[RMDB]
An RNA of 177 nucleotides, treated with 2A3 and DMS and read out base by base. For 2A3 the reverse transcriptase was SuperScript II with manganese. The data come from the RNA Mapping Database (RMDB), library M2PK50. Reactivities are given for positions 27 through 126. For DMS the reverse transcriptase was MarathonRT.
RNA sequence: GGGAACGACUCGAGUAGAGUCGAAAAAUAGUGUUAUUCGUAACACUAUAUAUCCGAACUCAAGGAUUCGUUCCAGAGACAUGCAUGCUAGCAUGAAACCAACUGAACAAGCGUUCGCGCUUGUUAAGACAAGCAAGAACUUCGGUUCUUGCUUGUCAAAAGAAACAACAACAACAAC
Reactivity to 2A3 in 0.01 (KOAc 150mM, MgCl2 10mM, bicine 150mM(pH8.5), 24C), signal-to-noise 2, nucleotides 027 to 126: a000u000a000g000u000g020u000u000a040u030u060c250g030u030a020a000c000a000c010u010a010u000a000u000a010u010c070c020g000a160a060c000u000c010a040a080g090g000a010u000u000c000g010u000u000c010c010a020g010a010g000a110c010a010u020g050c010a010u160g200c080u130a040g000c000a000u010g030a050a010a000c060c020a050a050c080u170g060a010a010c020a000a010g000c010g030u020u080c220g010c010g000c040u000u000g010u020u040a000a010
Reactivity to DMS in 0.01 (KOAc 150mM, MgCl2 10mM, bicine 150mM(pH8.5), 24C), signal-to-noise 2, nucleotides 027 to 126: a010u010a000g000u000g000u000u000a000u000u010c200g000u000a010a010c000a000c020u000a000u010a010u000a110u010c170c020g040a100a080c000u020c020a040a250g010g020a060u000u000c010g030u000u000c000c010a130g020a200g010a160c020a010u000g010c010a080u000g000c230u010a080g010c000a010u000g000a110a060a080c160c050a040a100c120u010g010a020a050c000a000a010g010c010g020u000u000c170g010c000g020c010u000u010g000u000u000a050a100